[RMDB]
RNA sequence: GGGAACGACUCGAGUAGAGUCGAAAAGAUAUGGAAUGCCUUAGACAUGAUGUCUCGGAAACGAGAUUUCAACAGCUAAUGCAUUCCUAAGUCAAAACUGGUAGGCCAGUUCGCUGGCCUACCAGAACGCUAAUAUGAUGUUCGCAUCAUAUUAGCGAAAAGAAACAACAACAACAAC
Reactivity to DMS in 0.01 (KOAc 150mM, MgCl2 10mM, bicine 150mM(pH8.5), 24C), signal-to-noise 5, nucleotides 027 to 126: g010a030u000a140u000g000g000a010a000u000g000c000c080u000u010a000g010a200c190a140u000g010a010u000g000u000c000u000c000g000g000a030a040a060c000g010a020g010a010u000u000u000c000a030a190c300a110g000c010u000a000a000u000g000c000a010u000u000c000c000u000a000a070g010u000c010a090a060a090a160c010u000g000g010u000a000g010g000c000c000a030g010u000u000c210g020c000u000g000g000c000c000u000a000c000c000a000g000a020a100
Reactivity to 2A3 in 0.01 (KOAc 150mM, MgCl2 10mM, bicine 150mM(pH8.5), 24C), signal-to-noise 4, nucleotides 027 to 126: g000a000u010a000u040g000g010a010a010u000g000c000c010u050u020a060g060a190c100a150u020g000a000u010g030u020c000u000c000g000g000a010a000a020c000g000a000g000a020u010u010u010c010a050a060c050a080g120c000u010a010a000u020g000c000a000u000u000c000c000u000a010a000g010u000c010a010a010a150a210c010u010g030g000u000a000g000g000c010c010a020g020u070u080c300g040c080u000g000g000c030c000u010a010c000c000a000g010a000a000

Chemical mapping of a 177-nucleotide RNA with DMS and 2A3. 2A3 is a SHAPE reagent: it acylates the 2'-hydroxyl of flexible nucleotides of all four kinds. Values cover nucleotides 27 to 126. It was measured as part of the RMDB library TTRDEL.